[RMDB]
RNA sequence: GGGAACGACUCGAGUAGAGUCGAAAACCUGGGAUCUUCGGAUCCCAGGAAAUAAAAUCAGCGGUAACCUCCGGUAAAAUAUUACCGCUGAACCGGAGCUUAAAACGGGGUUGUUCGCAACCCCGAAGAAUCCAAUAUCGUUCGCGAUAUUGGAUUCAAAAGAAACAACAACAACAAC
Reactivity to DMS in 0.01 (KOAc 150mM, MgCl2 10mM, bicine 150mM(pH8.5), 24C), signal-to-noise 1, nucleotides 027 to 126: c010c000u000g010g030g020a000u000c000u000u010c150g060g000a010u000c010c010c000a000g000g010a040a040a030u010a030a110a160a130u000c000a000g000c010g020g000u000a010a060c060c080u000c050c070g020g010u010a010a060a070a070u010a100u000u000a000c000c000g000c010u000g010a010a030c010c030g000g010a110g040c230u010u010a030a030a100a190c000g000g000g000g000u000u000g000u000u030c140g010c000a030a000c000c010c000c020g010a010a010